[RMDB]
RNA sequence: GGGAACGACUCGAGUAGAGUCGAAAAUUGAAUCUCAUUGGCCAGAACUGGAGCACAAACCCAUUCCUAAACCAACUUAUGGCAAAAAGAGGGUUGUCAAGAUUGUCCUAGACCAGUUGUAAUUGGUACCUUUGAUCAAGUGGGACUCAUGGAGUAAUAGUAAUUUAGGAUUCGUCCUAAAUUACUAAAAAGAAACAACAACAACAAC
Reactivity to 2A3 in 0.01 (KOAc 150mM, MgCl2 10mM, bicine 150mM(pH8.5), 24C), signal-to-noise 3, nucleotides 027 to 156: u080u050g010a010a060u040c020u000c060a060u040u130g040g000c010c020a020g020a060a010c060u020g010g030a050g020c110a030c030a040a080a090c030c010c020a090u090u060c000c010u060a120a030a020c010c010a020a090c080u240u160a130u210g010g040c040a000a130a000a000a000g040a040g040g020g000u020u020g050u040c030a040a030g020a140u030u120g070u070c010c020u050a030g020a080c010c040a020g010u030u020g080u120a140a180u090u080g050g000u090a110c000c030u110u120u100g050a070u100c030a080a040g010u050g030g040g010a010c010u020c070a040u170g070g070a040g050u150a080a070
Reactivity to DMS in 0.01 (KOAc 150mM, MgCl2 10mM, bicine 150mM(pH8.5), 24C), signal-to-noise 4, nucleotides 027 to 156: u000u000g020a060a070u010c030u000c020a170u000u000g040g020c000c020a100g010a080a100c060u010g010g010a200g030c090a080c060a060a050a070c010c010c020a190u000u010c040c040u000a060a130a070c020c010a050a170c190u010u010a080u010g000g020c010a090a090a070a120a100g010a180g030g020g020u000u000g010u020c080a060a150g000a230u000u010g020u000c040c020u000a090g030a060c010c040a030g040u000u020g020u010a060a140u000u000g030g010u000a050c040c060u000u000u010g020a120u000c080a040a070g040u000g040g010g000a070c060u000c030a080u000g020g010a150g030u000a080a190